[RMDB]
RNA sequence: GGGAACGACUCGAGUAGAGUCGAAAACGACACCAGGAUUAUGCAUACAUGUCCCUUGUCCGAAUCCGUGGUGCAGCUAUGAUGACGGGGAUAAACAUUCGCACGAACGAUAUGAGGAGUUAAUCCAAGACUCAUACUACUUCGGUAGUAUGAGUCUAAAAGAAACAACAACAACAAC
Reactivity to 2A3 in 0.01 (KOAc 150mM, MgCl2 10mM, bicine 150mM(pH8.5), 24C), signal-to-noise 3, nucleotides 027 to 126: c040g100a010c000a050c030c000a010g010g000a020u060u040a110u210g130c080a040u110a190c020a040u110g050u020c000c000c010u030u170g020u030c020c040g030a020a010u000c000c030g050u040g010g000u070g000c020a020g000c030u070a050u230g050a070u010g000a000c020g010g000g000g000a000u040a000a040a000c030a090u060u080c030g030c010a170c050g130a190a000c010g020a010u000a020u150g050a060g000g000a030g050u100u090a040a010u000c000c000a000
Reactivity to DMS in 0.01 (KOAc 150mM, MgCl2 10mM, bicine 150mM(pH8.5), 24C), signal-to-noise 2, nucleotides 027 to 126: c030g000a260c040a020c000c000a090g040g000a030u000u010a030u080g000c140a070u070a120c300a120u030g000u020c000c010c000u010u070g010u000c050c160g000a030a000u000c010c030g000u040g000g010u000g000c010a080g060c200u030a050u010g000a090u000g030a000c040g000g000g020g000a000u000a020a030a150c150a070u010u010c080g000c020a070c140g000a140a070c040g040a020u010a050u030g000a040g000g000a120g000u010u030a020a110u040c020c020a150